[RMDB]
RNA sequence: GGGAACGACUCGAGUAGAGUCGAAAAUUUAGUCCUUUGGAGUGUUCGUACCAAUAACCACAUCAGGUCUCCAAGGUGAAUAGCCUCUGGUCAAAUGUAUUAAUGUAGAUAAGGGAAGUCGGCAAAACAAUAGGGUUUGUUUCGACAAACCCUAUUGAAAAGAAACAACAACAACAAC
Reactivity to DMS in 0.01 (KOAc 150mM, MgCl2 10mM, bicine 150mM(pH8.5), 24C), signal-to-noise 6, nucleotides 027 to 126: u030u030u010a100g010u000c000c000u000u030u010g000g000a060g020u010g010u010u010c080g010u010a130c080c030a060a090u030a080a120c070c060a080c130a070u020c140a080g000g010u000c020u000c030c030a040a060g010g010u010g000a060a060u010a090g000c010c010u000c050u000g000g010u000c060a040a050a080u020g010u030a080u010u010a060a030u020g000u010a060g010a090u010a070a080g010g000g010a040a060g010u000c020g010g010c090a040a030a080a140
Reactivity to 2A3 in 0.01 (KOAc 150mM, MgCl2 10mM, bicine 150mM(pH8.5), 24C), signal-to-noise 5, nucleotides 027 to 126: u050u060u060a070g080u100c000c010u040u020u050g000g010a040g000u100g060u150u180c110g030u100a080c000c010a050a090u170a110a080c050c020a080c030a120u160c080a030g000g060u010c010u020c010c020a040a020g050g010u130g070a030a040u100a050g010c010c000u020c020u010g040g010u030c050a000a090a070u060g040u030a070u080u150a130a100u040g030u060a060g030a160u060a080a050g050g030g010a050a010g030u010c020g010g020c030a000a000a090a000
Chemical mapping of a 177-nucleotide RNA with DMS and 2A3. Conditions: 150 mM KOAc, 10 mM MgCl2 and 150 mM bicine (pH 8.5), 24 C. DMS adducts were read by reverse transcription with MarathonRT. The data come from the RNA Mapping Database (RMDB), libraries RFM100 and RFMREP.